[RMDB]
RNA sequence: GGGAACGACUCGAGUAGAGUCGAAAAUGCAUGGACCAGAUGUGCACACGAGGGUGUAGCUGUGCAUGUGUGCUGUGUGCGUGCAUGCAUGUGCGUGCACGUGAGCAUGUGUGCCUGUGUUCAUGUGUAGGUCUGUCACUUUCGAGUGACAGACCUAAAAAGAAACAACAACAACAAC
Reactivity to 2A3 in 0.01 (KOAc 150mM, MgCl2 10mM, bicine 150mM(pH8.5), 24C), signal-to-noise 3, nucleotides 027 to 126: u130g000c010a000u000g010g000a010c000c000a000g010a120u180g060u020g040c000a010c020a000c010g040a080g020g240g020u000g000u040a030g000c020u010g000u000g000c000a000u000g030u010g000u020g010c020u080g130u100g130u190g180c010g010u010g000c000a000u000g000c000a020u080g100u140g120c060g110u090g000c020a000c170g290u060g020a010g070c120a100u080g010u000g000u000g030c000c000u010g030u000g000u020u000c000a000u020g000u010g030
Reactivity to DMS in 0.01 (KOAc 150mM, MgCl2 10mM, bicine 150mM(pH8.5), 24C), signal-to-noise 2, nucleotides 027 to 126: u010g020c020a000u000g010g000a020c000c000a030g000a210u000g010u000g020c000a020c000a020c000g010a300g000g000g020u000g030u000a230g000c010u010g020u010g000c010a000u000g030u000g000u000g000c000u010g000u010g030u000g010c030g030u000g000c000a010u010g030c000a050u010g020u030g010c010g020u010g010c010a000c000g000u010g000a200g030c130a080u010g000u000g020u000g000c000c010u000g000u020g020u010u000c000a020u000g020u000g020